[RMDB]
RNA sequence: GGGAACGACUCGAGUAGAGUCGAAAAGUGCAGUUUUCGAACUGCACAGGUAUUCCUAAGUCCGAUGAGGUGAUCCUUCGUUGAAAUACAUCGGAAACGAUGUAUGGAGAAGUUAUCACCGAGGAUAUGGAUGAUAGACCACAUUUCGAUGUGGUAACCCGAGUAGCGUAUUCGUACGCUACUCGGGAAAAGAAACAACAACAACAAC
Reactivity to 2A3 in 0.01 (KOAc 150mM, MgCl2 10mM, bicine 150mM(pH8.5), 24C), signal-to-noise 1, nucleotides 027 to 156: g010u000g000c000a000g010u030u000u050u020c120g130a000a000c000u000g030c000a000c000a000g000g040u160a100u060u040c000c000u000a140a070g030u000c010c000g100a240u150g130a100g030g000u000g000a000u000c040c020u030u010c000g200u130u030g050a000a030a000u000a000c000a000u000c000g040g000a260a020a010c020g000a000u000g000u000a000u030g000g020a040g010a010a020g030u180u210a030u000c000a000c010c000g000a000g000g000a060u070a050u130g050g000a000u050g070a050u200a140g190a060c000c040a000c030a030u040u110u170c300g140a060u060g000u000g000g000u050a010a010
Reactivity to DMS in 0.01 (KOAc 150mM, MgCl2 10mM, bicine 150mM(pH8.5), 24C), signal-to-noise 1, nucleotides 027 to 156: g050u000g020c000a040g010u000u000u000u000c150g050a020a010c000u000g000c000a000c000a000g000g010u000a040u000u000c010c030u000a160a300g040u010c000c000g000a300u000g000a210g000g040u000g030a010u000c300c000u000u000c020g010u050u010g020a250a090a000u000a010c000a010u000c030g050g000a210a070a210c010g080a020u010g000u000a000u000g000g000a300g010a030a010g010u000u000a000u000c000a000c000c000g020a040g000g000a040u000a280u000g000g000a120u000g000a200u020a090g010a110c010c000a010c000a040u000u000u000c180g000a020u000g010u000g020g050u000a000a120
About this RNA: This 207-nucleotide RNA was probed chemically with 2A3 and DMS. Source: RMDB library RNAMAK, as collected in RNAgym. The RNA was probed in 150 mM KOAc, 10 mM MgCl2 and 150 mM bicine (pH 8.5) at 24 C. DMS adducts were read by reverse transcription with MarathonRT. For DMS, 1,593 sequencing reads were counted.